[RMDB]
RNA sequence: GGGAACGACUCGAGUAGAGUCGAAAAGGAUAGCGUGCGCUACCGGAUGGCGGGUAACUUAGGAAGCGUUUCUUGAGCUUCCCUGGGAUGAGCGUUUGGGAGAGCUGAUUCUGCAGCCCAGAGAGUAUCCGCAUAGUAAGUUCGCUUACUAUGCGGAAAAAGAAACAACAACAACAAC
Reactivity to DMS in 0.01 (KOAc 150mM, MgCl2 10mM, bicine 150mM(pH8.5), 24C), signal-to-noise 2, nucleotides 027 to 126: g030g000a040u000a020g020c060g040u000g010c130g020c010u000a050c030c050g010g000a060u000g020g010c110g010g010g000u010a040a120c090u010u010a070g030g000a050a030g010c050g000u000u010u070c150u010u010g010a230g010c010u000u000c000c000c040u000g000g000g030a090u000g010a110g010c100g040u000u010u000g020g000g000a110g010a130g010c040u000g000a100u000u000c060u010g020c030a100g010c040c010c040a130g000a130g000a120g020u000a090

Description
Conditions: 150 mM KOAc, 10 mM MgCl2 and 150 mM bicine (pH 8.5), 24 C. Structure probing data (DMS) for a 177-nucleotide construct. DMS adducts were read by reverse transcription with MarathonRT. Reactivities are given for positions 27 through 126.